[RMDB]
This 177-nucleotide RNA was probed chemically with DMS. Reactivities are given for positions 27 through 126. DMS adducts were read by reverse transcription with MarathonRT.

RNA sequence: GGGAACGACUCGAGUAGAGUCGAAAAAGUUUGGAGAGCACUCCGGGCCGAAUGGUCGAGUAGCACUCAGAGGGAGGAAUCCACACGGAGUAGAGCAGAGAAAUCACCUCCAGAGGACCCCUUCAGCCACUACAGACUACUUCGGUAGUCUGUAGUGAAAAGAAACAACAACAACAAC
Reactivity to DMS in 0.01 (KOAc 150mM, MgCl2 10mM, bicine 150mM(pH8.5), 24C), signal-to-noise 2, nucleotides 027 to 126: a200g010u010u010u000g000g000a000g020a130g020c010a050c000u000c010c090g080g020g010c010c010g060a110a060u020g040g050u000c030g000a040g010u000a070g040c000a160c000u010c000a160g000a100g020g040g030a080g020g020a070a130u010c010c000a100c170a300c100g010g010a020g010u020a100g010a150g010c170a140g010a090g000a010a080a100u000c010a100c170c020u010c020c010a060g010a300g000g000a060c090c030c000c060u000u000c030a130g020c060